Overview:
The record gives the reactivity of an RNA of 177 nucleotides to 2A3 and DMS. The DMS profile rests on 959 reads.
[RMDB]
RNA sequence: GGGAACGACUCGAGUAGAGUCGAAAAAGCAUAUCCACCCUGGAAGGACACCUCUCAAGCAUCAUGAUUGCCAUUCCUGGACUUGGGAAGGAUCCCAACGACCCCACUGCAGAUGUCGAACUCAAUCCAGCGCUUCAAAGUUCGCUUUGAAGCGCUGAAAAGAAACAACAACAACAAC
Reactivity to 2A3 in 0.01 (KOAc 150mM, MgCl2 10mM, bicine 150mM(pH8.5), 24C), signal-to-noise 2, nucleotides 027 to 126: a000g140c070a070u090a100u060c000c010a070c070c010c000u040g100g000a080a040g030g000a030c010a030c080c000u040c000u030c030a050a020g030c010a120u070c000a040u070g060a090u060u150g050c020c010a040u050u060c020c020u060g000g060a070c020u000u000g000g030g000a030a070g110g010a100u030c000c020c010a010a020c010g050a020c010c010c000c020a010c030u080g010c040a060g000a120u110g040u020c000g010a040a020c020u000c080a010a060u030c090
Reactivity to DMS in 0.01 (KOAc 150mM, MgCl2 10mM, bicine 150mM(pH8.5), 24C), signal-to-noise 1, nucleotides 027 to 126: a210g000c000a000u000a090u000c070c070a140c040c000c000u000g000g000a180a110g000g000a000c200a000c070c010u010c000u030c050a000a110g080c050a070u040c010a090u000g000a100u000u000g010c140c030a040u000u000c000c000u020g000g060a040c110u000u000g000g000g000a090a130g010g000a230u000c000c000c000a010a160c210g000a280c110c030c000c080a130c050u040g000c010a030g010a000u050g000u000c010g050a040a180c020u000c120a000a000u040c050

The RNA was probed in 150 mM KOAc, 10 mM MgCl2 and 150 mM bicine (pH 8.5) at 24 C.